[RMDB]
Overview
Source: RMDB library OK1LIB, as collected in RNAgym. Structure probing data (DMS and 2A3) for a 177-nucleotide construct.
RNA sequence: GGGAACGACUCGAGUAGAGUCGAAAAACAUUGAUGCUACGUGGUCGCAUUUCAGUCAGGGCCGCCGUAAUUAGCUAUGUGCACUUCAGGUUGCUGGCAUUCUAAUUCGAGGGCAGUGAAGGGCGCGCUUAAGAACAUUGUUCGCAAUGUUCUUAAGAAAAGAAACAACAACAACAAC
Reactivity to DMS in 0.01 (KOAc 150mM, MgCl2 10mM, bicine 150mM(pH8.5), 24C), signal-to-noise 9, nucleotides 027 to 126: a090c100a120u020u020g000a080u020g010c020u010a060c120g020u010g010g010u010c050g000c060a070u020u010u020c080a090g010u020c090a090g010g010g010c030c010g020c040c050g020u020a040a050u020u020a050g010c110u010a050u010g030u010g000c020a040c040u010u020c110a110g010g010u020u020g020c020u010g010g010c040a040u010u010c030u000a050a080u010u020c100g010a100g000g000g010c020a070g000u010g000a050a050g000g000g010c050g010c060g010
Reactivity to 2A3 in 0.01 (KOAc 150mM, MgCl2 10mM, bicine 150mM(pH8.5), 24C), signal-to-noise 9, nucleotides 027 to 126: a000c060a050u110u210g060a050u110g040c030u060a040c040g080u080g040g040u050c020g010c110a050u040u120u160c070a070g090u050c040a030g020g060g000c030c030g080c030c010g060u060a060a120u080u070a040g020c070u060a030u130g040u060g020c020a010c040u080u100c080a070g170g050u120u080g010c020u050g080g000c010a040u070u020c030u080a100a070u040u040c040g040a080g010g030g000c020a040g040u010g080a030a040g030g000g000c020g000c000g000
The RNA was probed in 150 mM KOAc, 10 mM MgCl2 and 150 mM bicine (pH 8.5) at 24 C. For 2A3 the reverse transcriptase was SuperScript II with manganese.